[RMDB]
RNA sequence: GGGAACGACUCGAGUAGAGUCGAAAAAAAUUUAAAGUCUGAGAACUUUAACUGUUAAGUUCAAAUUCCAGCUCUGCAUUUUCCAGCUUUAUGAUUGUGGCAAGUAAAAUGAAGCUAUUUGAGCUUCAGUAGUUCUAGGAUUCGUCCUAGAACUACUAAAAGAAACAACAACAACAAC
Reactivity to DMS in 0.01 (KOAc 150mM, MgCl2 10mM, bicine 150mM(pH8.5), 24C), signal-to-noise 1, nucleotides 027 to 126: a060a050a040u010u000u010a070a060a060g000u000c040u010g020a210g000a040a030c050u000u000u000a020a040c150u000g010u000u000a040a030g000u000u000c060a050a040a050u000u000c060c070a040g000c020u000c100u020g000c130a040u000u000u010u020c020c020a120g010c030u000u020u000a050u060g020a170u000u000g000u020g000g000c060a040a060g010u000a030a040a050a050u000g020a030a010g010c000u000a120u010u020u000g010a070g000c000u000u000c100